The record gives the reactivity of an RNA of 207 nucleotides to 2A3. Source: RMDB library OK3TST, as collected in RNAgym. For 2A3 the reverse transcriptase was SuperScript II with manganese. Conditions: 150 mM KOAc, 10 mM MgCl2 and 150 mM bicine (pH 8.5), 24 C.
RNA sequence: GGGAACGACUCGAGUAGAGUCGAAAAAGACGUCGUCUCAUUCCUCAAUGGGGCGUCGGUCAGUGCUCAAGAGAAUAUCACAACUGGGGAAUCUGAGCAGACCGAGACUGCAACGGCUACCUCAGGCGACGAUACCAUUGGAUAUGUGAUUGUCGUCCCGAGUAUCUUCCUUCGGGAAGAUACUCGGAAAAGAAACAACAACAACAAC
Reactivity to 2A3 in 0.01 (KOAc 150mM, MgCl2 10mM, bicine 150mM(pH8.5), 24C), signal-to-noise 1, nucleotides 027 to 156: a000g050a020c040g000u020c000g000u000c000u000c020a000u040u040c030c050u150c150a000a010u010g000g000g010g070c000g000u000c000g000g020u070c060a060g100u060g070c050u090c140a190a020g060a030g020a180a160u170a170u300c030a010c020a160a210c140u170g060g000g000g010a020a130u060c000u040g000a000g000c000a000g000a050c000c090g010a000g000a050c050u060g020c050a070a020c030g060g020c020u060a170c000c000u010c080a040g030g040c000g000a000c000g020a020u140a260c000c000a010u000u060g150g000a010u040a010u250g030u030g000a020u080u070g000u000c010g000u000c000